[RMDB]
RNA sequence: GGGAACGACUCGAGUAGAGUCGAAAAGAGAGCAAGCACGAGAUCUCGGCCUUCCACCAGCGCUGGAUCAUCGGCCGCGGCUGCCCGCUGCUCACAGCCGCCGUCGUCUUCCACAGGAAGCGGAGCAUCUCAAGACGAAUUUCGAUUCGUCUUGAGAAAAAGAAACAACAACAACAAC
Reactivity to DMS in 0.01 (KOAc 150mM, MgCl2 10mM, bicine 150mM(pH8.5), 24C), signal-to-noise 4, nucleotides 027 to 126: g010a170g010a050g010c030a070a100g010c060a120c120g010a070g010a050u000c020u010c010g000g000c060c040u000u000c040c060a130c130c110a080g010c190g010c150u000g000g010a030u010c080a060u010c020g010g010c020c220g030c010g000g000c000u000g000c040c020c040g000c060u000g010c010u010c040a170c020a010g040c000c010g020c000c220g000u000c010g020u000c060u000u000c000c000a120c120a110g000g000a040a070g010c010g010g000a050g010c150a070
Reactivity to 2A3 in 0.01 (KOAc 150mM, MgCl2 10mM, bicine 150mM(pH8.5), 24C), signal-to-noise 2, nucleotides 027 to 126: g180a010g010a000g000c050a180a010g020c020a050c120g090a060g030a170u060c050u060c050g050g000c000c020u040u060c050c020a050c000c050a070g040c040g030c170u030g010g030a020u040c020a090u110c080g020g010c020c010g010c000g000g000c000u020g020c000c000c000g020c080u050g000c020u020c020a030c000a000g010c000c000g020c020c010g020u020c000g010u040c060u060u020c010c010a100c020a080g060g030a020a020g030c050g020g020a020g000c020a070
An RNA of 177 nucleotides, treated with DMS and 2A3 and read out base by base. For DMS, 3,415 sequencing reads were counted. 2A3 adducts were read by reverse transcription with SuperScript II with manganese. For 2A3, 3,390 sequencing reads were counted.